Chemical mapping of a 177-nucleotide RNA with 2A3. The RNA was probed in 150 mM KOAc, 10 mM MgCl2 and 150 mM bicine (pH 8.5) at 24 C. The 2A3 profile rests on 2,032 reads. 2A3 is a SHAPE reagent: it acylates the 2'-hydroxyl of flexible nucleotides of all four kinds.

[RMDB]
RNA sequence: GGGAACGACUCGAGUAGAGUCGAAAAACGGUGCUGCUAUGGUACGCCAUAGCAGCACCGAAUUGUUCACUUAGAUUGUUCUUAGUAUGAGGUGUUCUCGUACUAAGUAGAGUCUAAGAGAACAAAACCUGGUUGAAUCAUUCGUGAUUCAACCAGGAAAAGAAACAACAACAACAAC
Reactivity to 2A3 in 0.01 (KOAc 150mM, MgCl2 10mM, bicine 150mM(pH8.5), 24C), signal-to-noise 3, nucleotides 027 to 126: a000c000g040g000u010g000c010u010g000c000u000a000u010g000g000u090a080c300g010c030c000a000u000a020g000c030a000g020c000a010c000c000g000a000a000u000u000g000u000u000c020a010c000u000u010a000g010a010u020u070g120u300u030c000u000u000a000g000u010a010u010g030a000g020g070u200g170u300u200c000u000c000g030u000a000c000u000a000a000g000u000a000g000a010g000u000c000u000a000a000g020a010g000a000a000c000a000a060a000a020